[RMDB]
RNA sequence: GGGAACGACUCGAGUAGAGUCGAAAAGGAAGGCCUACUAGCAUGAGGAUGCUGUGUCUUCUCUUAGAGGUAUGCCAUGGUCAGCCAUGGAACCGAGAGGUUGCUCUUCCUUGAAAAGCUGGCCAAGCUAUUAAGCGAGUUUCGACUCGCUUAAUAGAAAAGAAACAACAACAACAAC
Reactivity to 2A3 in 0.01 (KOAc 150mM, MgCl2 10mM, bicine 150mM(pH8.5), 24C), signal-to-noise 7, nucleotides 027 to 126: g040g020a070a020g020g000c020c030u070a080c050u060a050g050c030a070u120g080a040g150g080a030u050g020c080u050g060u040g010u080c020u050u020c050u000c010u010u070a060g030a060g160g050u090a050u190g050c020c010a030u020g000g000u080c060a060g090c030c000a010u020g000g020a010a000c030c010g000a010g000a010g050g040u080u120g010c010u010c000u050u010c000c000u000u000g030a080a090a000a020g000c020u020g010g020c010c000a020a010g030
Reactivity to DMS in 0.01 (KOAc 150mM, MgCl2 10mM, bicine 150mM(pH8.5), 24C), signal-to-noise 9, nucleotides 027 to 126: g010g010a040a030g000g010c010c140u010a050c040u010a040g020c110a060u000g010a110g000g010a040u000g020c060u010g000u010g010u000c030u000u000c010u000c020u000u000a080g000a200g000g000u000a030u010g010c010c030a070u000g000g010u000c160a110g010c010c020a050u000g000g000a020a010c030c020g000a180g000a130g010g010u000u000g000c030u000c040u000u000c000c010u000u000g000a080a100a140a110g010c020u000g010g010c020c050a080a140g010